[RMDB]
Annotation: The record gives the reactivity of an RNA of 177 nucleotides to 2A3 and DMS. Reactivities are given for positions 27 through 126. For 2A3, 1,315 sequencing reads were counted. For DMS, 2,482 sequencing reads were counted. DMS adducts were read by reverse transcription with MarathonRT.

RNA sequence: GGGAACGACUCGAGUAGAGUCGAAAAGCCGACGCGCUGGGCUGGCGUUCGCGACGCGAGGCUGGAUGGCCUUCCCCAUUAUGAUUCUUCUCGCUUCCGGCGGCCCGCGUUGCAGGCCAUGCUGUCCACACAGCUCCUAGUUCGCUAGGAGCUGUGUAAAAGAAACAACAACAACAAC
Reactivity to 2A3 in 0.01 (KOAc 150mM, MgCl2 10mM, bicine 150mM(pH8.5), 24C), signal-to-noise 1, nucleotides 027 to 126: g000c010c010g150a080c050g030c010g000c010u100g000g000g000c000u020g080g020c060g070u160u110c070g010c030g090a040c010g020c010g050a070g010g030c080u050g100g050a150u110g040g020c020c080u050u030c000c020c020c010a060u220u250a080u240g130a130u180u060c030u090u030c030u010c030g030c060u040u010c030c000g050g030c000g030g000c030c030c000g020c000g000u000u040g070c020a000g040g000c010c000a020u110g000c040u070g000u000c010c000
Reactivity to DMS in 0.01 (KOAc 150mM, MgCl2 10mM, bicine 150mM(pH8.5), 24C), signal-to-noise 2, nucleotides 027 to 126: g030c010c010g030a160c190g020c080g030c050u020g000g010g000c020u000g020g020c020g020u010u000c190g010c020g000a020c050g020c040g020a080g020g020c040u010g000g000a070u010g020g010c030c040u000u000c020c030c010c140a130u020u000a070u000g010a120u000u000c070u000u000c040u000c050g020c050u000u000c040c010g010g010c040g000g010c020c020c000g020c020g010u000u000g000c040a150g000g010c010c030a080u010g010c060u000g000u000c030c040